[RMDB]
RNA sequence: GGGAACGACUCGAGUAGAGUCGAAAACAAGACAGAAACACAGAACUGUCCUACCAGCUCUUGCUUGAUUCCAUGGGAGACAGAACCAGAUACUUUUCCAUGUGGAAUCAGGCCGUGGACAGUUAUGACCCAGAUGUCAGAAUUAUUGAAAAUCAUGUGGAUGAAAUAGUUUCGACUAUUUCAUCCAAAAAGAAACAACAACAACAAC
Reactivity to 2A3 in 0.01 (KOAc 150mM, MgCl2 10mM, bicine 150mM(pH8.5), 24C), signal-to-noise 2, nucleotides 027 to 156: c060a060a000g040a040c020a040g130a060a100a000c110a010c040a050g060a090a010c000u000g000u010c000c000u050a070c060c180a110g090c030u050c070u170u180g000c000u010u000g000a000u000u000c000c000a010u020g040g000g000a000g000a000c070a100g070a080a070c060c000a070g000a160u140a160c040u040u020u010u000c000c080a100u070g000u010g060g030a000a000u000c000a000g010g010c000c000g040u010g000g000a000c000a000g000u010u000a050u070g020a040c000c010c000a040g020a100u030g030u010c000a000g070a130a100u120u150a060u160u190g040a060a040a020a060u000c060a090u000g010
Reactivity to DMS in 0.01 (KOAc 150mM, MgCl2 10mM, bicine 150mM(pH8.5), 24C), signal-to-noise 2, nucleotides 027 to 156: c070a060a150g030a080c050a040g000a070a050a090c030a300c120a060g010a040a090c010u000g010u010c000c000u010a190c090c100a150g040c120u010c050u000u010g040c000u000u050g010a110u020u000c020c010a020u010g000g000g010a060g020a070c050a030g000a080a160c060c100a220g010a300u000a040c060u010u000u000u000c000c010a100u000g020u000g010g000a020a010u000c030a040g000g010c010c130g000u000g000g020a020c010a030g020u010u000a040u000g000a040c050c000c000a160g010a250u000g000u000c020a110g020a200a110u000u000a050u000u000g000a070a090a100a160u000c060a150u000g020

This 207-nucleotide RNA was probed chemically with 2A3 and DMS. 2A3 adducts were read by reverse transcription with SuperScript II with manganese. It was measured as part of the RMDB library OK3TST. The reactions ran in a buffer of 150 mM KOAc, 10 mM MgCl2 and 150 mM bicine (pH 8.5), at 24 C. DMS adducts were read by reverse transcription with MarathonRT.